[RMDB]
Conditions: 150 mM KOAc, 10 mM MgCl2 and 150 mM bicine (pH 8.5), 24 C. This 207-nucleotide RNA was probed chemically with 2A3 and DMS. Values cover nucleotides 27 to 156.
RNA sequence: GGGAACGACUCGAGUAGAGUCGAAAAUGCAUUCGCUGGGUAAUCGGGACAUAGACAUGCCAUGUACUGAAGCGCGCACGGUAUUUGGCAACAGCUAUGUUCUCUAGCGUGUUACCUGUGCUGAAGCGCGCACGGCAACCGAAAGGUGCGAAAUAAACUUAAGAUUAAUCUUCGGAUUAAUCUUAAGAAAAGAAACAACAACAACAAC
Reactivity to 2A3 in 0.01 (KOAc 150mM, MgCl2 10mM, bicine 150mM(pH8.5), 24C), signal-to-noise 7, nucleotides 027 to 156: u170g010c020a050u010u030c010g000c010u020g010g010g020u030a020a030u090c090g020g010g010a000c000a010u020a020g090a100c050a070u030g000c000c000a000u020g000u000a000c000u020g020a100a030g010c000g000c000g000c020a060c050g020g000u000a010u000u030u020g020g010c020a060a040c040a150g080c010u000a000u010g020u080u000c030u000c010u010a080g110c060g090u140g020u050u000a010c000c000u080g080u090g110c100u220g000a020a000g000c000g000c000g010c010a010c030g090g000c040a110a160c000c010g040a060a050a040g010g000u050g000c030g040a080a080a080u230a070a100a030
Reactivity to DMS in 0.01 (KOAc 150mM, MgCl2 10mM, bicine 150mM(pH8.5), 24C), signal-to-noise 3, nucleotides 027 to 156: u010g010c090a120u010u000c040g020c010u000g020g020g010u010a030a040u000c040g020g000g010a050c010a030u000a040g020a080c070a280u000g010c000c010a060u010g010u010a040c000u010g000a060a130g040c010g040c010g030c030a300c020g040g030u000a010u000u000u000g010g030c000a050a070c090a180g000c010u000a010u010g020u000u010c020u000c120u020a110g040c150g020u000g030u000u000a020c000c010u000g020u010g010c000u020g010a070a040g040c010g040c010g050c000a070c040g010g000c010a100a090c010c030g010a110a160a200g000g020u010g010c020g000a080a070a150u010a100a140a230

For 2A3 the reverse transcriptase was SuperScript II with manganese.